[RMDB]
Source information: Structure probing data (2A3 and DMS) for a 177-nucleotide construct. Values cover nucleotides 27 to 126. High DMS reactivity at an A or C suggests that its Watson-Crick edge is free. For DMS the reverse transcriptase was MarathonRT. The RNA was probed in 150 mM KOAc, 10 mM MgCl2 and 150 mM bicine (pH 8.5) at 24 C.
RNA sequence: GGGAACGACUCGAGUAGAGUCGAAAAGUAAUAGUAAUUGAACUUAGUACGAGAGGAACCGUUCAUUCACGUAAUUGGUAUUUACAUCUGUUUGAUAAGACAAUGUUGUGAAGCUACCACGUGUUGGGUCAGAUAAAACUUUCGAGUUUUAUCUGACAAAAGAAACAACAACAACAAC
Reactivity to 2A3 in 0.01 (KOAc 150mM, MgCl2 10mM, bicine 150mM(pH8.5), 24C), signal-to-noise 6, nucleotides 027 to 126: g070u100a010a160u150a110g090u070a010a100u060u070g010a000a000c010u030u010a000g010u020a000c020g010a000g000a030g120g010a040a010c000c010g000u000u000c010a000u020u060c040a010c020g010u070a170a120u110u060g010g010u020a090u040u050u010a010c020a010u010c020u050g140u060u040u040g300a290u190a150a020g020a020c030a070a130u180g000u050u010g000u020g010a010a000g050c060u010a020c010c010a030c050g020u020g070u050u080g140g020
Reactivity to DMS in 0.01 (KOAc 150mM, MgCl2 10mM, bicine 150mM(pH8.5), 24C), signal-to-noise 9, nucleotides 027 to 126: g010u020a080a080u030a100g010u010a050a030u010u010g000a020a010c000u000u010a060g010u000a150c020g000a210g010a220g000g000a100a120c150c260g000u010u000c000a020u000u000c050a030c030g010u020a100a120u030u010g000g010u000a040u000u000u000a000c010a010u000c020u000g000u000u000u000g000a130u030a080a060g010a010c000a010a080u020g010u000u000g010u000g000a000a020g000c140u010a020c060c020a050c230g010u010g000u010u010g000g000